[RMDB]
RNA sequence: GGGAACGACUCGAGUAGAGUCGAAAAACAAAUACUCACGCUGCUAGGCGGGUGCGCACUGCUGUCUGGCCCGGCGCCGCGCUAGGGCCCACACCUAGCGUUGCAAAGGGUAACCGGGCUGAAAAAAUCUAGAGACAUACUUCGGUAUGUCUCUAGAAAAAGAAACAACAACAACAAC
Reactivity to DMS in 0.01 (KOAc 150mM, MgCl2 10mM, bicine 150mM(pH8.5), 24C), signal-to-noise 2, nucleotides 027 to 126: a080c080a060a050a130u000a080c030u000c000a140c150g000c040u000g020c050u000a080g040g000c030g010g000g010u000g000c050g020c090a070c100u000g010c060u000g000u010c070u000g000g010c010c020c000g000g000c300g000c020c040g010c020g000c000u000a000g030g030g000c080c050c090a050c110a170c000c010u000a010g020c010g020u000u010g000c030a030a260a140g000g000g000u000a120a090c050c030g000g000g000c010u010g000a000a030a070a050a140a070

Chemical mapping of a 177-nucleotide RNA with DMS. In probing experiments dimethyl sulfate is read out at A N1 and C N3, which are open when not base-paired. The DMS profile rests on 1,381 reads. Source: RMDB library M2PK90, as collected in RNAgym. DMS adducts were read by reverse transcription with MarathonRT.